[RMDB]
RNA sequence: GGGAACGACUCGAGUAGAGUCGAAAAUAGGCUGGACAUGGUGGCUCAUGCCUGUAAUCCUAGCAUUUUGGGAGGCCAAGACAGGUUGAUCACUUGAGUCCUGGAGUUUGAGACCAGCCUGGGCAACAUGGCAAAUACCUGUCUCUACAAAAAAUACUGUGAAUUAAGGAUUCGUCCUUAAUUCACAAAAAGAAACAACAACAACAAC
Reactivity to DMS in 0.01 (KOAc 150mM, MgCl2 10mM, bicine 150mM(pH8.5), 24C), signal-to-noise 2, nucleotides 027 to 156: u000a030g010g030c030u000g010g030a090c040a100u010g000g050u000g020g010c060u000c020a050u000g010c010c000u010g020u020a070a000u000c000c010u000a050g020c040a170u010u000u010u000g010g010g000a050g020g030c030c060a060a050g010a070c040a030g010g010u000u000g010a100u000c100a040c050u010u000g000a300g020u000c020c040u000g000g010a100g020u000u000u000g000a150g010a080c010c010a090g040c020c020u010g000g000g010c020a030a020c040a040u000g020g000c040a080a050a140u000a080c040c000u010g000u000c000u000c030u000a170c040a010a040a060a090a090a070u000a090c130
Reactivity to 2A3 in 0.01 (KOAc 150mM, MgCl2 10mM, bicine 150mM(pH8.5), 24C), signal-to-noise 3, nucleotides 027 to 156: u090a010g020g000c000u020g010g010a050c000a020u090g030g010u040g010g020c010u020c030a030u110g000c000c000u000g040u040a030a010u020c000c000u000a040g040c140a220u140u090u030u060g010g050g000a010g020g000c020c040a030a010g030a010c010a010g010g000u060u050g040a070u090c050a030c030u040u030g010a030g030u010c020c000u000g020g010a050g020u040u070u150g040a050g030a020c000c000a000g030c000c000u020g000g020g030c050a090a090c040a140u060g030g000c000a010a070a090u110a090c000c010u040g010u000c020u000c000u060a070c050a030a070a030a000a010a090u200a130c100

The record gives the reactivity of an RNA of 207 nucleotides to DMS and 2A3. Conditions: 150 mM KOAc, 10 mM MgCl2 and 150 mM bicine (pH 8.5), 24 C. Source: RMDB library OK3TST, as collected in RNAgym.